[RMDB]
RNA sequence: GGGAACGACUCGAGUAGAGUCGAAAACGUCCCCGUCGUACAGAAUGGUAACAUAGCUCUCCAAAUAUCUGAGCUUGGGUAUACGGGGAAACCCAACCCCUUGGGAAGAUUGGGUAUAUGGCUAAAUUACAUCGAUUGUACUUCGGUACAAUCGAAACUGGGUUGUUUAGUUCGCUAAACAACCCAGAAAAGAAACAACAACAACAAC
Reactivity to 2A3 in 0.01 (KOAc 150mM, MgCl2 10mM, bicine 150mM(pH8.5), 24C), signal-to-noise 1, nucleotides 027 to 156: c050g080u030c020c000c010c000g050u060c020g010u060a060c040a080g120a140a140u170g040g060u100a110a020c010a040u040a030g000c000u010c000u000c110c040a140a190a060u160a140u050c070u050g010a010g030c000u010u010g050g010g040u050a050u000a070c010g000g000g000g000a020a000a040c030c000c010a030a040c030c000c000c000u030u070g000g060g000a100a010g030a110u070u040g000g040g020u030a070u010a040u100g030g000c030u050a090a090a120u050u090a030c060a110u030c000g020a030u010u020g020u020a000c000u000u020c160g000g000u000a000c010a000a000u000c000g000a010a000a000